[RMDB]
RNA sequence: GGGAACGACUCGAGUAGAGUCGAAAAACGGCACGUUACGACGUGCCGACUUGGGUCAGUUCAGAGGUCCUCGGGGCGCGCGUCGAGUCAGCCGUGUGCGCAGGGAGACCUCUCCCACCCACAGUAAGCGUUGUUGAGAGUUCGCUCUCAACAACGCAAAAGAAACAACAACAACAAC
Reactivity to 2A3 in 0.01 (KOAc 150mM, MgCl2 10mM, bicine 150mM(pH8.5), 24C), signal-to-noise 2, nucleotides 027 to 126: a000c000g000g000c000a000c040g060u100u120a080c270g030a000c000g070u000g000c010c000g000a000c020u020u010g000g030g000u050c070a120g040u220u220c080a050g000a000g080g000u000c000c000u000c000g110g000g050g000c000g000c000g000c000g010u050c000g010a100g210u140c040a020g000c000c020g000u010g000u010g000c130g000c060a020g010g000g000a300g010a010c000c000u000c000u000c030c000c000a040c020c000c000a050c020a020g070u170a130a030